The data come from the RNA Mapping Database (RMDB), library OK1LIB.
This 177-nucleotide RNA was probed chemically with 2A3 and DMS.
2A3 adducts were read by reverse transcription with SuperScript II with manganese.
The reactions ran in a buffer of 150 mM KOAc, 10 mM MgCl2 and 150 mM bicine (pH 8.5), at 24 C.
The DMS profile rests on 1,253 reads.
Values are in units of 0.01, from 0 to 300, in steps of 10.
RNA sequence: GGGAACGACUCGAGUAGAGUCGAAAAUUGUGUACGCGGAUGGUCUAACACCAGAUGACAUAUCAGCAAGAGUCAGGUUGUGUAACAACGUUAAUGGAUUCUUCGAGAAUGAUCUGACAAAGCAAGAACAGGCUCGUUUAUUCGUAAACGAGCCUGUAAAAGAAACAACAACAACAAC
Reactivity to 2A3 in 0.01 (KOAc 150mM, MgCl2 10mM, bicine 150mM(pH8.5), 24C), signal-to-noise 1, nucleotides 027 to 126: u100u000g000u000g000u170a020c070g020c040g110g030a070u120g000g000u000c000u220a020a020c000a090c000c070a070g000a010u090g070a000c000a100u000a080u060c000a000g090c040a090a090g000a000g040u000c000a040g000g040u000u000g010u050g190u270a000a000c000a000a000c140g020u250u300a110a050u260g100g000a000u000u000c000u000u000c030g040a140g040a000a030u130g010a030u040c000u010g000a000c000a000a160a060g020c000a000a000g000a060
Reactivity to DMS in 0.01 (KOAc 150mM, MgCl2 10mM, bicine 150mM(pH8.5), 24C), signal-to-noise 1, nucleotides 027 to 126: u000u060g010u010g020u020a050c170g000c040g000g000a120u080g000g000u030c100u000a050a060c070a130c230c130a110g000a100u000g020a080c100a020u040a000u070c010a100g040c120a040a050g000a130g000u000c010a050g000g020u000u000g000u020g000u000a040a210c140a000a050c050g000u040u020a030a100u000g010g000a050u000u000c080u050u000c070g000a060g020a070a110u000g000a020u020c000u010g000a020c240a080a180a160g000c180a100a100g010a160